[RMDB]
RNA sequence: GGGAACGACUCGAGUAGAGUCGAAAAUGUUGGCUUGGUUUUUGUUUUUCUAGGACUAUCUAAUAUAGGAAUCUCUAUUUUUUGGGAUUUUAGCGACUUAGAGAAUUUGAUGGUUGGUGGUUUGUUAAUAUCUUUAAACAUUCGUGUUUAAAGAUAUAAAAGAAACAACAACAACAAC
Reactivity to DMS in 0.01 (KOAc 150mM, MgCl2 10mM, bicine 150mM(pH8.5), 24C), signal-to-noise 2, nucleotides 027 to 126: u030g000u000u000g000g000c110u010u010g000g000u000u000u000u000u010g000u000u010u000u010u010c030u010a070g000g000a090c020u000a040u010c010u010a060a040u020a150u020a170g010g010a030a050u000c020u010c000u000a020u020u010u020u020u020u010g010g010g000a030u000u010u010u010a090g020c170g000a080c060u020u010a020g000a050g010a060a060u020u010u010g000a090u010g020g020u010u010g020g000u010g020g000u010u000u010g010u000u010a070
Reactivity to 2A3 in 0.01 (KOAc 150mM, MgCl2 10mM, bicine 150mM(pH8.5), 24C), signal-to-noise 1, nucleotides 027 to 126: u070g000u030u100g030g030c030u010u070g090g000u070u060u020u020u010g020u000u120u030u010u000c020u010a030g040g030a110c000u010a060u060c040u140a050a110u280a040u080a100g080g000a020a010u000c000u000c080u130a130u180u060u090u100u180u220g010g050g000a010u000u010u030u100a040g080c000g000a000c020u040u030a010g020a000g100a070a070u130u080u110g040a110u220g000g000u000u000g000g000u000g040g070u010u000u000g040u040u010a010
An RNA of 177 nucleotides, treated with DMS and 2A3 and read out base by base.